[RMDB]
RNA sequence: GGGAACGACUCGAGUAGAGUCGAAAACAGACCUGGUUGCCUGGGUUCGUGAAGGUCAUGACCGCCGCGCGGAAAAUCGAUGAGAUCAUCGGCAUCGACACCGUUGGCUCCUGGGAAGACCAGGAAACUGGUUGAACUAGUUCGCUAGUUCAACCAGAAAAGAAACAACAACAACAAC
Reactivity to 2A3 in 0.01 (KOAc 150mM, MgCl2 10mM, bicine 150mM(pH8.5), 24C), signal-to-noise 1, nucleotides 027 to 126: c080a000g140a140c010c000u010g010g050u020u010g040c020c010u020g070g000g000u090u110c040g020u070g020a090a010g120g080u110c080a090u150g080a070c050c050g000c010c020g010c050g030c040g050g000a180a030a000a040u040c060g000a020u020g000a040g050a110u100c060a050u100c110g100g010c010a010u010c000g010a000c020a000c090c000g000u010u110g050g000c030u040c000c030u010g010g010g010a060a090g040a040c000c000a000g000g000a050a000a000
Reactivity to DMS in 0.01 (KOAc 150mM, MgCl2 10mM, bicine 150mM(pH8.5), 24C), signal-to-noise 2, nucleotides 027 to 126: c010a100g000a090c010c000u000g010g000u010u000g000c020c010u000g010g010g020u010u000c060g040u000g000a160a090g010g030u000c040a170u010g040a140c210c080g030c020c020g040c220g000c000g010g000a050a050a110a090u000c010g000a040u000g000a120g000a110u010c150a070u000c140g010g000c010a000u000c000g000a050c170a300c000c000g000u000u020g010g000c020u020c000c060u010g000g000g000a080a080g010a070c010c000a000g000g000a020a070a100